[RMDB]
RNA sequence: GGGAACGACUCGAGUAGAGUCGAAAACUUCGGCUGGACCGCCCUGCUCAUGACCAUCCUCCUGGUCGCGCUGUUCCUCGGCGCCACGCUGUUGCGCAUGGAGGCCAUCUGGCUGGCUUUCCUGCUACAUGAGUGAGGAGUUCGCUCCUCACUCAUGAAAAGAAACAACAACAACAAC
Reactivity to 2A3 in 0.01 (KOAc 150mM, MgCl2 10mM, bicine 150mM(pH8.5), 24C), signal-to-noise 2, nucleotides 027 to 126: c010u080u070c010g040g000c040u070g000g060a100c050c000g000c000c010c000u030g030c030u020c040a080u130g040a090c000c020a020u110c000c020u030c020c010u020g030g000u070c020g000c010g000c010u030g040u090u100c000c040u050c030g010g000c030g000c030c020a040c060g070c050u080g010u230u140g010c020g010c010a020u210g010g020a040g020g000c040c000a030u080c050u100g080g000c010u010g030g000c030u070u020u000c010c010u010g010c020u040a070
Reactivity to DMS in 0.01 (KOAc 150mM, MgCl2 10mM, bicine 150mM(pH8.5), 24C), signal-to-noise 2, nucleotides 027 to 126: c100u000u000c040g000g000c040u000g020g010a110c070c060g000c020c020c070u000g020c030u000c090a060u010g000a070c030c030a060u010c040c020u000c050c050u000g000g020u000c080g010c100g010c040u010g000u010u000c030c020u000c090g010g010c030g010c060c060a030c110g010c050u000g020u000u000g010c100g020c030a060u000g000g000a070g000g010c050c020a030u010c060u020g010g010c110u010g000g000c030u000u000u000c000c010u000g010c050u010a200
Description: Source: RMDB library OK2TST, as collected in RNAgym. An RNA of 177 nucleotides, treated with 2A3 and DMS and read out base by base. Reactivities are given for positions 27 through 126. For 2A3 the reverse transcriptase was SuperScript II with manganese. For 2A3, 2,745 sequencing reads were counted. For DMS, 4,416 sequencing reads were counted.